[RMDB]
RNA sequence: GGGAACGACUCGAGUAGAGUCGAAAAACCUUUGGCAAGGCCUACUGUCAGAUUAAAUCUGAACUACUACAAAUGAACAGAUACUUAGUCCAGCUCGACUUCAUCUCCUUUAUAAAAUUCAACUCGUUUAUCACUCGGGAUUCGUCCCGAGUGAUAAAAAAGAAACAACAACAACAAC
Reactivity to 2A3 in 0.01 (KOAc 150mM, MgCl2 10mM, bicine 150mM(pH8.5), 24C), signal-to-noise 3, nucleotides 027 to 126: a010c020c000u030u070u000g050g040c070a080a040g020g020c000c020u020a030c030u040g050u010c010a010g000a040u050u170a110a150a170u060c000u000g020a040a040c000u100a050c010u060a030c110a070a130a050u150g010a060a020c020a090g030a040u090a060c030u050u080a020g030u020c000c010a010g010c010u040c020g120a070c000u040u000c040a010u010c010u100c010c000u040u210u000a200u200a070a180a020a020u100u070c020a070a050c060u030c010g000u000
An RNA of 177 nucleotides, treated with 2A3 and read out base by base. It was measured as part of the RMDB library RFM100.